[RMDB]
RNA sequence: GGGAACGACUCGAGUAGAGUCGAAAACGAGUCCGAAACGGGCGACCAUAGUCGGCGGCCGCAGACGCGAAGCCGGGUGAGCUACCCGUGGGCAGGCUGAAGCGGGGGUAAGACCCCGUGGAGGGCCGAUUACCAGAUCGUUCGCGAUCUGGUAAUCAAAAGAAACAACAACAACAAC
Reactivity to DMS in 0.01 (KOAc 150mM, MgCl2 10mM, bicine 150mM(pH8.5), 24C), signal-to-noise 1, nucleotides 027 to 126: c080g030a150g030u000c000c030g000a080a250a040c080g050g010g000c190g000a030c010c060a110u000a160g040u020c000g000g020c000g050g060c130c000g030c050a080g070a220c120g000c030g000a100a110g010c020c000g070g040g030u000g000a180g050c020u020a040c010c000c050g030u000g000g000g000c020a050g000g030c000u000g010a300a140g000c000g000g000g000g000g030u000a130a250g000a230c020c000c000c000g030u000g000g000a190g000g010g020c030c070
This 177-nucleotide RNA was probed chemically with DMS. DMS (dimethyl sulfate) methylates the pairing face of unpaired adenines and cytosines. For DMS the reverse transcriptase was MarathonRT.